Chemical mapping of a 177-nucleotide RNA with DMS and 2A3.
RNA sequence: GGGAACGACUCGAGUAGAGUCGAAAACGUCCUCCUUCGGAUGCCCAGGUCGGACCGCGAGGAGGUGGAGAUGCCAUGCCGACCCGAAGAGGAAAGAAGAACGCGAGACGCGAACCUGUGAGUGGAACUAUAAUAGGAUCUUCGGAUCCUAUUAUAGAAAAGAAACAACAACAACAAC
Reactivity to DMS in 0.01 (KOAc 150mM, MgCl2 10mM, bicine 150mM(pH8.5), 24C), signal-to-noise 4, nucleotides 027 to 126: c120g010u000c000c000u010c040c020u000u010c050g010g000a200u000g000c050c010c020a150g020g010u000c050g010g010a150c040c060g010c130g010a090g000g000a070g000g010u010g010g000a100g000a100u000g000c040c040a100u000g000c030c020g000a060c010c010c020g020a050a040g020a100g000g000a030a050a070g010a090a080g000a050a070c070g000c040g000a080g000a090c070g020c050g010a090a090c030c060u000g010u000g000a070g020u000g020g010a080a180
Reactivity to 2A3 in 0.01 (KOAc 150mM, MgCl2 10mM, bicine 150mM(pH8.5), 24C), signal-to-noise 2, nucleotides 027 to 126: c020g070u030c030c000u000c000c020u020u030c020g100g020a070u110g110c010c020c000a030g070g040u080c040g010g030a050c000c030g000c050g020a060g010g020a030g050g000u020g020g040a100g010a040u140g030c030c010a030u070g000c020c010g030a050c000c040c000g040a040a030g020a020g010g040a020a060a020g070a010a050g030a050a010c010g040c010g040a080g030a070c040g020c000g020a040a040c000c010u080g010u050g090a080g060u070g020g020a030a030

Overview
For DMS, 4,190 sequencing reads were counted. The 2A3 profile rests on 2,222 reads. Conditions: 150 mM KOAc, 10 mM MgCl2 and 150 mM bicine (pH 8.5), 24 C. DMS adducts were read by reverse transcription with MarathonRT. For 2A3 the reverse transcriptase was SuperScript II with manganese.